RNA sequence: GGGAACGACUCGAGUAGAGUCGAAAAAGGGGUGAUGAUGCAGUACAAGAUCAUGCUCACGGCAAGGAAAAUGGGCGGCUUUUGCAAGUCCUGCAUUCAAGAGUUUAACAUGACGAUUGAAGCGAACGACACCGCCGACGCGGUAGAGAAAGCAAAAGAUAUAGGCUACGUUCGCGUAGCCUAUAUCAAAAGAAACAACAACAACAAC
Reactivity to 2A3 in 0.01 (KOAc 150mM, MgCl2 10mM, bicine 150mM(pH8.5), 24C), signal-to-noise 6, nucleotides 027 to 156: a010g060g000g010g030u050g020a050u020g010a020u070g040c070a020g040u070a040c030a040a070g020a080u080c020a050u130g010c010u020c040a040c050g030g010c040a040a060g050g060a070a110a040a050u090g010g000g000c020g020g010c040u020u020u040u090g020c020a020a020g000u000c000c010u020g020c040a220u020u010c010a010a010g020a010g030u010u040u060a170a100c120a120u280g020a000c010g040a040u010u010g010a010a000g010c000g000a010a000c010g020a010c000a000c020c000g020c030c050g040a060c150g010c010g000g000u030a030g010a000g020a060a020a000g040c020a030a030a000a000
Reactivity to DMS in 0.01 (KOAc 150mM, MgCl2 10mM, bicine 150mM(pH8.5), 24C), signal-to-noise 2, nucleotides 027 to 156: a040g040g020g050g040u000g040a090u000g010a110u000g000c040a130g000u000a100c030a080a070g020a110u000c010a140u010g060c060u000c030a110c080g000g010c090a060a090g000g000a060a050a090a090u010g010g000g050c050g010g010c090u000u010u010u040g010c050a050a140g000u010c010c020u000g050c060a130u010u000c040a020a040g000a300g000u000u000u000a070a130c190a110u000g000a040c030g000a300u000u000g010a020a110g060c040g000a030a010c000g000a300c060a040c020c000g020c030c080g020a140c300g020c040g010g020u000a040g000a100g020a040a060a060g010c040a050a020a070a100